[RMDB]
RNA sequence: GGGAACGACUCGAGUAGAGUCGAAAAGUCAGGAUUUGAACCCAAAGAGUCCGGUUCCAGGCACUCACGCGUGAGGCUGCUGUUGCUGUGCUAUUGGAAGAGCUGCUGCUUCCUAUGCUGAGCCUCCGUCCACUAUGAUAUUCGUAUCAUAGUGGACAAAAGAAACAACAACAACAAC
Reactivity to DMS in 0.01 (KOAc 150mM, MgCl2 10mM, bicine 150mM(pH8.5), 24C), signal-to-noise 6, nucleotides 027 to 126: g010u000c050a080g020g010a080u000u000u010g000a100a160c020c020c020a070a100a210g000a070g000u000c030c060g020g010u000u010c010c020a090g000g010c060a060c030u000c040a060c120g010c110g000u010g010a050g010g010c030u000g000c040u000g000u000u000g020c040u000g000u000g010c020u010a160u000u010g010g010a030a030g010a130g010c080u000g000c050u010g010c030u000u000c010c020u010a060u000g000c050u010g000a070g000c030c020u000c060c220
Reactivity to 2A3 in 0.01 (KOAc 150mM, MgCl2 10mM, bicine 150mM(pH8.5), 24C), signal-to-noise 3, nucleotides 027 to 126: g050u060c040a030g050g050a080u070u110u190g060a150a100c000c000c000a030a060a040g030a000g010u010c060c000g020g020u040u030c040c010a020g000g040c020a010c090u060c000a060c070g090c030g050u130g040a020g050g000c020u030g010c020u050g120u300u120g000c080u110g060u040g080c030u060a060u150u110g060g030a040a040g000a020g060c070u130g020c040u070g000c000u100u000c010c000u030a050u090g040c020u030g060a020g000c000c020u020c040c000